Source information: Conditions: 150 mM KOAc, 10 mM MgCl2 and 150 mM bicine (pH 8.5), 24 C. Chemical mapping of a 177-nucleotide RNA with 2A3 and DMS. The DMS profile rests on 21,650 reads. Values cover nucleotides 27 to 126. Source: RMDB library OK2TST, as collected in RNAgym.
[RMDB]
RNA sequence: GGGAACGACUCGAGUAGAGUCGAAAACAUGUGCAGAUGCUGGAGCGUAAUCCAGUGGUUGCUGCAUUGCUGGAUGAUGGUUUGCGCCGUGGUUAUCAGGAUGCGGAAAUUGGCCCGUGGUUACGCGUACUAUCUCGAGAUUCGUCUCGAGAUAGUAAAAAGAAACAACAACAACAAC
Reactivity to 2A3 in 0.01 (KOAc 150mM, MgCl2 10mM, bicine 150mM(pH8.5), 24C), signal-to-noise 8, nucleotides 027 to 126: c030a040u140g040u090g080c040a010g030a150u080g040c020u070g060g060a080g000c030g030u040a010a020u040c010c010a020g010u060g080g020u050u080g050c020u020g000c000a010u000u040g030c010u020g030g040a030u120g030a010u030g040g080u080u140u180g100c130g000c020c010g020u050g060g020u090u050a110u260c010a000g020g010a010u030g000c020g030g050a100a170a160u110u100g060g000c020c010c010g050u100g030g000u010u000a000c000g020c010g000
Reactivity to DMS in 0.01 (KOAc 150mM, MgCl2 10mM, bicine 150mM(pH8.5), 24C), signal-to-noise 7, nucleotides 027 to 126: c060a060u010g020u000g010c040a050g000a090u000g010c020u010g000g000a180g010c070g010u000a040a030u000c000c020a090g010u000g010g010u000u000g010c010u000g010c010a020u000u000g000c010u000g010g010a040u000g000a050u000g000g000u000u000u020g020c300g000c010c010g020u000g010g010u000u000a100u010c020a040g000g000a030u000g010c030g000g010a060a060a110u010u000g010g000c020c010c040g010u010g020g000u000u000a020c030g020c040g000